[RMDB]
RNA sequence: GGGAACGACUCGAGUAGAGUCGAAAAUAUGGCCACAUGAAUGACUCAGCGCAGUAUGAAGUCUUUGUUUUCUUCCGAAAACAAGCUCAAUGAGAGCCAUCGGGGGUAGAUCUAUCUCAUGACGAGUGGUGGAAUACUUUGACUCAUGAGAGAGAAGGUGAACUUAAGACUUCGGUCUUAAGUUCACAAAAGAAACAACAACAACAAC
Reactivity to 2A3 in 0.01 (KOAc 150mM, MgCl2 10mM, bicine 150mM(pH8.5), 24C), signal-to-noise 3, nucleotides 027 to 156: u130a020u030g000g000c020c020a050c040a080u120g090a080a080u090g020a020c030u010c050a040g050c030g000c130a020g050u120a060u050g090a140a010g050u020c000u070u040u030g000u020u040u020u000c040u220u020c070c100g030a010a020a020a020c010a010a020g000c000u020c070a060a190u190g010a080g020a030g130c000c020a020u020c030g010g000g000g000g030u030a050g060a120u000c030u090a060u000c000u000c000a010u000g000a000c030g020a040g040u040g030g090u080g050g070a050a010u130a090c030u070u140u130g030a040c020u020c000a000u010g010a000g000a010g000a000g020a030a010g140
Reactivity to DMS in 0.01 (KOAc 150mM, MgCl2 10mM, bicine 150mM(pH8.5), 24C), signal-to-noise 1, nucleotides 027 to 156: u000a020u000g030g010c000c000a090c070a110u000g020a210a080u000g030a040c000u000c010a090g050c070g030c050a100g020u010a040u000g000a140a050g000u000c040u000u010u010g010u000u000u000u010c000u020u000c270c240g000a070a030a010a030c030a000a080g020c020u000c030a060a130u010g000a180g010a040g000c000c010a020u010c060g000g000g010g010g020u000a030g140a140u000c010u000a010u000c000u000c010a040u000g010a010c030g020a300g020u000g020g010u000g020g010a100a140u000a040c010u000u010u010g000a190c220u010c010a000u000g000a000g030a040g000a010g010a020a130g010